Annotation: This 177-nucleotide RNA was probed chemically with 2A3. The reactions ran in a buffer of 150 mM KOAc, 10 mM MgCl2 and 150 mM bicine (pH 8.5), at 24 C. Values cover nucleotides 27 to 126.
[RMDB]
RNA sequence: GGGAACGACUCGAGUAGAGUCGAAAAACUGCGUACGCGCAGAACAUUGUUCGACACCAUGGAUCCCCAGGUGGGUCACGUUUCAAGAUACACCAACCUGGAGGACUCCAUGCUGUUGAGCUGUUAAGUGCCUCGCCGUUUUCGAACGGCGAGGCACAAAAGAAACAACAACAACAAC
Reactivity to 2A3 in 0.01 (KOAc 150mM, MgCl2 10mM, bicine 150mM(pH8.5), 24C), signal-to-noise 1, nucleotides 027 to 126: a020c030u000g000c050g000u030a040c230g000c040g000c050a010g020a000a000c060a050u060u160g000u000u000c000g030a000c000a000c000c000a000u010g010g000a000u000c040c000c030c000a050g030g000u020g020g000g000u100c080a040c070g050u000u080u170c120a060a100g030a180u080a030c020a090c070c000a110a140c000c000u000g000g000a170g000g000a000c020u010c000c000a000u000g000c030u000g000u000u000g010a010g000c020u010g030u000u050a170a020